The data come from the RNA Mapping Database (RMDB), library TTRDES. An RNA of 177 nucleotides, treated with 2A3 and DMS and read out base by base. For DMS the reverse transcriptase was MarathonRT. For DMS, 806 sequencing reads were counted. Values are in units of 0.01, from 0 to 300, in steps of 10. Conditions: 150 mM KOAc, 10 mM MgCl2 and 150 mM bicine (pH 8.5), 24 C.

RNA sequence: GGGAACGACUCGAGUAGAGUCGAAAAGAUAUGGAGCGUUGUGACGCUGAUGACCUAACUCGGAAACGAGUUAGCAAGGCGCACACGCUCCUAAGUCAAAGGUAGCAGACGUUCGCGUCUGCUACCACAAGUCAACCGACUUCGGUCGGUUGACUUGAAAAGAAACAACAACAACAAC
Reactivity to 2A3 in 0.01 (KOAc 150mM, MgCl2 10mM, bicine 150mM(pH8.5), 24C), signal-to-noise 1, nucleotides 027 to 126: g030a020u090a080u190g010g000a040g030c040g060u150u180g030u200g120a300c030g070c040u100g110a300u110g080a030c000c030u000a000a000c000u000c010g000g050a020a080a050c010g000a010g020u000u000a000g040c020a080a300g010g000c000g010c030a000c000a000c000g000c000u000c000c000u000a010a000g010u000c040a140a040a030g000g000u000a010g000c010a000g000a010c000g030u100u000c300g040c000g180u020c000u020g000c000u000a000c000c000a000
Reactivity to DMS in 0.01 (KOAc 150mM, MgCl2 10mM, bicine 150mM(pH8.5), 24C), signal-to-noise 1, nucleotides 027 to 126: g020a040u020a300u000g010g000a030g010c000g030u030u020g030u000g000a210c040g060c000u010g000a100u020g000a050c300c020u000a000a000c000u000c000g010g000a150a170a220c000g010a060g000u000u000a000g000c000a120a090g000g020c000g000c010a020c000a000c010g070c000u020c000c000u010a000a050g010u000c010a060a100a110g040g000u010a000g000c000a050g000a040c000g010u000u010c300g000c000g020u000c000u020g000c000u000a010c020c000a010